[RMDB]
The record gives the reactivity of an RNA of 177 nucleotides to 2A3 and DMS. Conditions: 150 mM KOAc, 10 mM MgCl2 and 150 mM bicine (pH 8.5), 24 C. 2A3 adducts were read by reverse transcription with SuperScript II with manganese.
RNA sequence: GGGAACGACUCGAGUAGAGUCGAAAAAGACAGGGUUUCACCAUGUUGGCCAGGCUGAUCUCUAACUCCUGACCUCAAGUGAUCUGCCCACCUCAGCCUCCCAAACUGCUGGGAUUACAGGCAUGAGGACAAGUGCAAUCUUCGGAUUGCACUUGUCAAAAGAAACAACAACAACAAC
Reactivity to 2A3 in 0.01 (KOAc 150mM, MgCl2 10mM, bicine 150mM(pH8.5), 24C), signal-to-noise 1, nucleotides 027 to 126: a000g060a030c050a070g000g000g050u050u080u090c030a000c050c070a100u170g060u020u030g070g020c030c000a010g060g000c160u030g130a260u080c180u050c050u190a130a170c010u020c030c010u010g000a010c000c010u060c020a000a030g030u010g020a030u030c030u100g000c130c000c000a040c000c000u010c010a000g000c000c020u020c000c020c000a110a250a020c100u150g030c020u000g040g010g000a000u100u270a080c090a000g040g040c050a160u010g000a030g030
Reactivity to DMS in 0.01 (KOAc 150mM, MgCl2 10mM, bicine 150mM(pH8.5), 24C), signal-to-noise 2, nucleotides 027 to 126: a060g000a190c080a040g040g000g030u000u010u000c010a080c000c090a110u000g000u050u000g010g000c000c020a050g000g000c140u020g020a120u000c250u010c140u010a120a050c020u010c000c000u020g000a090c000c000u000c060a030a070g020u010g000a040u000c070u000g000c000c000c000a180c050c000u000c000a050g000c010c020u000c000c010c000a000a070a110c160u000g010c170u010g010g000g040a130u000u000a090c300a030g000g000c010a040u000g000a000g000